[RMDB]
RNA sequence: GGGAACGACUCGAGUAGAGUCGAAAAACAGCGCCUGCGAUGGCAUAUAACCGUAUUGCGGAUGGAGCGUCACGUGAGGACUGUGAAGCACAAUGCGAUAUGUUCUGAUUAUAUGGCGAGUUUGCUUCUUAUAUGUUUGCUUCGGCAAACAUAUAAGAAAAGAAACAACAACAACAAC
Reactivity to 2A3 in 0.01 (KOAc 150mM, MgCl2 10mM, bicine 150mM(pH8.5), 24C), signal-to-noise 3, nucleotides 027 to 126: a010c000a030g100c010g000c050c000u030g030c040g090a090u060g030g000c040a010u050a000u020a060a050c080c000g000u000a020u080u100g030c090g090g070a150u020g060g020a090g030c030g020u000c000a040c130g110u090g130a200g060g040a010c050u140g000u050g020a000a000g000c020a010c020a030a050u070g010c000g030a010u010a020u050g020u120u170c040u070g080a070u030u170a170u040a020u130g040g020c020g030a040g000u000u060u050g000c030u030u000
Reactivity to DMS in 0.01 (KOAc 150mM, MgCl2 10mM, bicine 150mM(pH8.5), 24C), signal-to-noise 2, nucleotides 027 to 126: a090c060a080g020c070g060c010c030u000g030c140g030a060u010g020g040c000a040u000a060u010a150a070c090c030g000u010a050u020u000g040c020g030g000a230u000g000g000a110g000c030g020u000c030a040c070g000u000g010a130g020g020a060c050u030g050u010g050a100a060g020c010a040c020a060a100u010g010c010g010a060u000a040u000g000u010u000c080u020g000a110u000u000a040u000a040u000g020g000c030g030a110g030u000u000u000g000c060u000u000

Chemical mapping of a 177-nucleotide RNA with 2A3 and DMS. Conditions: 150 mM KOAc, 10 mM MgCl2 and 150 mM bicine (pH 8.5), 24 C. It was measured as part of the RMDB library RFMREP. The 2A3 profile rests on 2,023 reads. DMS adducts were read by reverse transcription with MarathonRT.